[RMDB]
RNA sequence: GGGAACGACUCGAGUAGAGUCGAAAACAUAUGAGCAGGGCAGGCCGAAGCUUAAUGGCCUAUCAGAUCCCAGGCUGGGCACGAUGGACAGGGCCAUCAAGUGCACAACAGACGGCGCAAACCAGCAACAUGACAUCUGGUUCGCCAGAUGUCAUGUAAAAGAAACAACAACAACAAC
Reactivity to 2A3 in 0.01 (KOAc 150mM, MgCl2 10mM, bicine 150mM(pH8.5), 24C), signal-to-noise 2, nucleotides 027 to 126: c010a000u200a070u300g070a030g050c060a060g010g070g000c030a010g110g000c030c000g000a080a030g000c020u060u110a080a020u140g000g010c040c000u000a030u030c030a030g070a140u040c000c030c010a020g160g000c050u140g000g020g000c050a030c090g000a020u090g000g020a020c130a170g000g030g000c000c000a010u000c020a040a070g020u050g100c080a020c010a290a000c000a070g090a050c000g000g000c030g000c100a040a030a060c010c020a000g020c040a010
Reactivity to DMS in 0.01 (KOAc 150mM, MgCl2 10mM, bicine 150mM(pH8.5), 24C), signal-to-noise 2, nucleotides 027 to 126: c080a110u010a080u020g010a070g010c030a140g010g000g020c070a040g000g000c040c020g020a100a110g000c070u010u000a090a040u010g000g000c010c000u010a100u020c040a090g020a080u010c010c000c030a060g020g040c040u010g020g020g030c130a050c060g010a070u000g010g030a130c140a100g010g030g030c000c040a050u000c020a060a080g020u000g000c030a080c080a050a060c070a080g000a140c080g000g010c030g000c080a050a090a100c060c050a040g000c060a100
Structure probing data (2A3 and DMS) for a 177-nucleotide construct. 2A3 adducts were read by reverse transcription with SuperScript II with manganese.